[RMDB]
RNA sequence: GGGAACGACUCGAGUAGAGUCGAAAACAUGGUGGAAGGUGAAAGGCACAUCUUACAUGGUGGCAGGCAAGAGAGAAUGAGAGCCAAGCUAAAGGGGGAAACCUCUUAUAAAACCAUCAGAUCUCGUGAGACUUAUUCACUACCACAAGAGCAGCAAACUAAAAUCACUAUUCGUAGUGAUUUUAGUAAAAGAAACAACAACAACAAC
Reactivity to DMS in 0.01 (KOAc 150mM, MgCl2 10mM, bicine 150mM(pH8.5), 24C), signal-to-noise 3, nucleotides 027 to 156: c030a110u000g030g010u000g030g020a080a050g010g030u000g010a040a100a080g010g000c020a110c040a070u010c040u000u000a090c080a120u000g060g070u000g000g010c010a080g020g000c060a060a110g000a100g020a090g010a140a100u000g010a080g010a120g020c020c020a050a130g010c070u000a040a070a090g010g030g030g010g020a070a060a150c040c000u000c010u000u000a110u010a060a040a090a050c010c020a050u000c050a040g010a160u000c020u000c020g020u010g020a140g010a110c050u010u010a110u000u000c020a070c000u000a110c020c000a050c050a040a090g010a100g020c030a060g030c070a080a080
Reactivity to 2A3 in 0.01 (KOAc 150mM, MgCl2 10mM, bicine 150mM(pH8.5), 24C), signal-to-noise 7, nucleotides 027 to 156: c040a050u120g060g010u020g020g050a130a170g050g010u020g000a050a030a020g050g000c050a030c010a060u030c010u060u110a080c050a100u070g020g010u020g050g000c030a010g020g000c030a110a010g070a010g020a010g040a160a120u170g010a060g010a010g080c020c020a030a010g000c010u100a080a030a030g000g000g000g000g010a010a020a020c010c000u010c000u040u010a070u040a060a070a010a010c030c000a010u030c030a010g030a120u040c080u060c110g030u020g020a060g020a040c010u030u040a050u160u030c010a010c020u030a050c010c010a020c030a070a020g020a010g050c050a010g010c040a120a050